RNA sequence: GGGAACGACUCGAGUAGAGUCGAAAACACUACAAACGCCAACGACGAGCGUUUCGCUCUCGCCGCUUAAGCGGUGAGCCGCUGCACUGAUCUGUCCUUGGGUCAGGCGGAGGAAGGCAACUUCCCAGGGGGGCAACCCUCGAACCGCAGCAGCGACCUUACUUUCAGAGUUCGCUCUGAAAGUAAGAAAAGAAACAACAACAACAAC
Reactivity to DMS in 0.01 (KOAc 150mM, MgCl2 10mM, bicine 150mM(pH8.5), 24C), signal-to-noise 2, nucleotides 027 to 156: c080a110c040u010a060c090a090a060a050c000g000c000c020a050a040c030g030a040c090g030a030g000c000g000u010u000u000c040g010c050u010c000u000c000g000c010c010g060c020u000u000a060a080g060c020g000g030u000g000a060g040c000c010g000c010u000g030c010a300c020u000g000a030u000c010u000g040u000c160c160u010u030g030g000g010u000c000a040g000g020c010g020g020a070g010g060a050a020g000g000c190a110a150c010u000u000c010c010c040a260g000g000g010g030g000g010c270a100a180c010c000c030u010c010g020a040a100c030c000g030c010a210g030c030a020g020c020g010a040c030
Reactivity to 2A3 in 0.01 (KOAc 150mM, MgCl2 10mM, bicine 150mM(pH8.5), 24C), signal-to-noise 5, nucleotides 027 to 156: c050a030c060u280a070c090a040a070a010c020g000c020c030a180a070c120g200a030c070g030a090g020c020g010u020u040u050c070g020c030u020c000u010c010g010c010c000g040c050u300u300a280a040g010c000g000g000u010g000a000g010c010c010g000c000u000g000c010a020c050u000g010a010u000c000u010g210u230c060c080u120u260g010g000g000u000c010a000g020g000c000g010g000a030g010g000a000a010g020g010c060a080a140c000u010u000c010c000c010a040g030g000g000g000g010g010c020a060a080c000c000c010u000c010g010a050a020c000c010g010c010a020g010c000a000g000c000g040a050c010